RNA sequence: GGGAACGACUCGAGUAGAGUCGAAAACUGUGCUUCCAAUUGCCUGGUUUGAUGUCAGAGAAUCAAAUAACCAUUGUUUUUUCUCCGCUUUUGGCUUUGAUUAAAGAUCAGAUAGAUCAUUUAACCAGUCUUGAAGUAAGUUCGCUUACUUCAAGACAAAAGAAACAACAACAACAAC
Reactivity to DMS in 0.01 (KOAc 150mM, MgCl2 10mM, bicine 150mM(pH8.5), 24C), signal-to-noise 5, nucleotides 027 to 126: c070u010g020u000g010c050u010u000c030c040a120a140u000u000g020c060c040u000g010g010u000u000u000g000a040u000g010u000c060a100g000a110g010a100a050u000c030a030a060a080u010a090a140c130c090a050u010u000g010u000u000u010u010u000u000c020u000c030c120g010c110u010u000u010u000g020g000c060u010u020u010g010a050u000u010a030a050a070g000a030u010c010a160g010a140u000a140g000a020u000c010a070u010u000u000a040a050c030c030a100
Reactivity to 2A3 in 0.01 (KOAc 150mM, MgCl2 10mM, bicine 150mM(pH8.5), 24C), signal-to-noise 4, nucleotides 027 to 126: c020u040g030u060g090c010u080u060c020c020a070a140u110u080g020c000c010u040g000g030u030u030u120g070a040u060g030u080c030a040g020a010g050a160a060u050c020a040a030a110u080a060a020c020c010a050u040u060g140u030u060u030u000u090u010c050u030c050c040g030c060u090u040u040u080g040g010c000u050u010u050g030a050u090u100a100a070a030g030a040u030c010a010g110a200u100a050g020a020u100c010a110u020u030u040a060a050c010c000a010